[RMDB]
RNA sequence: GGGAACGACUCGAGUAGAGUCGAAAAGCAGUUCCAGAGUCUGUGGACUCUGAAUACUAGCGGUCAGUCGUCGUCCACAGACGACGUGAACUGAUUAUGAGAAUGAUCAGACUGACGACGUAUUCUCAUAUGUCCUAUCGCUAGGAACUGGAUAGGCACUUUUACUCGAUUUCGAUCGAGUAAAAGUAAAAGAAACAACAACAACAAC
Reactivity to 2A3 in 0.01 (KOAc 150mM, MgCl2 10mM, bicine 150mM(pH8.5), 24C), signal-to-noise 8, nucleotides 027 to 156: g060c000a010g010u020u000c020c000a010g010a000g020u020c030u100g140u240g120g010a000c010u000c030u060g020a030a030u110a070c060u060a030g170c050g020g020u020c020a020g040u020c010g000u010c010g010u010c030c050a110c040a120g010a010c000g000a000c000g050u080g060a070a030c000u010g010a010u010u010a020u050g070a030g050a100a040u030g020a040u020c000a010g030a050c020u040g010a020c030g010a010c040g050u050a050u040u010c030u000c020a030u040a060u140g080u040c000c010u040a030u030c020g030c160u050a070g050g060a050a040c050u040g010g010a040u030a040g020g010c030
Reactivity to DMS in 0.01 (KOAc 150mM, MgCl2 10mM, bicine 150mM(pH8.5), 24C), signal-to-noise 4, nucleotides 027 to 156: g020c020a040g000u000u000c010c010a050g000a300g020u000c010u010g040u000g060g010a020c000u000c050u000g000a050a050u010a070c030u000a090g050c040g010g010u000c010a050g010u000c020g020u000c030g010u010c010c120a190c240a180g010a040c010g020a050c010g030u010g020a070a170c020u010g010a050u000u000a020u000g010a210g000a140a030u000g020a070u000c020a080g010a260c060u000g010a090c040g020a080c040g010u000a040u000u000c030u010c050a070u000a050u010g010u000c010c030u000a040u000c030g010c030u010a110g020g000a070a060c050u000g010g010a110u000a070g010g010c130
The record gives the reactivity of an RNA of 207 nucleotides to 2A3 and DMS. The 2A3 profile rests on 8,946 reads. Conditions: 150 mM KOAc, 10 mM MgCl2 and 150 mM bicine (pH 8.5), 24 C. Reactivities are given for positions 27 through 156. Source: RMDB library OK3TST, as collected in RNAgym.